[RMDB]
RNA sequence: GGGAACGACUCGAGUAGAGUCGAAAAGUAUAGCGAUGUGAACGUACUAGGAUGCUAUAUAGUGUAUCAGUGAGUGAUUGCUGGGUAAUAAACCACCCUAGAUCUUAAAGCAAUAACCUUGUAUGUGCACACAGGGAGCAUUCGUGCUCCCUGUGUGAAAAGAAACAACAACAACAAC
Reactivity to DMS in 0.01 (KOAc 150mM, MgCl2 10mM, bicine 150mM(pH8.5), 24C), signal-to-noise 3, nucleotides 027 to 126: g010u000a040u000a040g010c030g000a150u020g020u010g010a130a070c030g010u010a020c010u010a060g010g020a140u000g000c010u000a030u000a080u000a080g010u000g000u000a050u000c080a080g000u000g000a170g030u010g010a070u000u000g010c070u010g000g000g020u010a060a040u010a080a120a180c280c090a030c020c010c010u000a100g020a020u000c060u000u000a050a060a090g000c050a030a060u010a100a120c040c020u010u010g010u000a030u010g010u000g010
Reactivity to 2A3 in 0.01 (KOAc 150mM, MgCl2 10mM, bicine 150mM(pH8.5), 24C), signal-to-noise 2, nucleotides 027 to 126: g030u070a040u070a120g090c080g070a100u050g080u010g200a100a010c010g000u010a000c000u000a000g070g010a040u060g020c020u000a000u010a030u050a140g110u040g040u030a040u160c040a070g060u030g250a100g080u060g000a040u000u060g000c060u030g000g000g010u020a020a000u030a090a070a020c010c010a050c000c000c010u040a060g030a120u040c040u040u070a170a060a020g000c020a050a070u050a100a080c010c010u010u040g010u000a060u000g060u000g010
This 177-nucleotide RNA was probed chemically with DMS and 2A3. The reactions ran in a buffer of 150 mM KOAc, 10 mM MgCl2 and 150 mM bicine (pH 8.5), at 24 C. It was measured as part of the RMDB library OK2TST. Reactivities are rounded to 0.1 and cut off at 0 and 3.